The data come from the RNA Mapping Database (RMDB), library RFM130. Structure probing data (2A3) for a 207-nucleotide construct. The RNA was probed in 150 mM KOAc, 10 mM MgCl2 and 150 mM bicine (pH 8.5) at 24 C. For 2A3 the reverse transcriptase was SuperScript II with manganese.

[RMDB]
RNA sequence: GGGAACGACUCGAGUAGAGUCGAAAAAAAAAAUUUAAUGGCAGAAUUGGAACUUCUGAACCACCACUGACGAAUCACAUUGAAACUAAAGAGAUGUAAUACGUCAUUUGGUGUUUCCGAAGUUUAUACUGUCAAGUUUAGCUUACUUUAACAAAAAGAUUUAGAAGAUCUUCGGAUCUUCUAAAUCAAAAGAAACAACAACAACAAC
Reactivity to 2A3 in 0.01 (KOAc 150mM, MgCl2 10mM, bicine 150mM(pH8.5), 24C), signal-to-noise 2, nucleotides 027 to 156: a000a000a000a000a000a000u100u060u050a030a070u040g000g000c010a000g060a300a120u080u190g060g010a000a090c000u000u010c000u000g000a000a000c020c000a010c000c000a000c010u010g000a000c000g000a050a010u030c040a000c000a010u010u050g080a110a130a060c120u150a100a210a020g080a030g000a000u000g000u010a080a000u040a030c000g020u000c000a000u120u040u090g030g000u020g000u000u000u000c000c000g000a000a000g000u020u020u000a020u020a000c000u000g000u000c020a010a050g020u050u020u010a020g000c010u000u070a020c020u180u300u300a020a030c080a010a040a300a000a070
Values cover nucleotides 27 to 156. The 2A3 profile rests on 726 reads.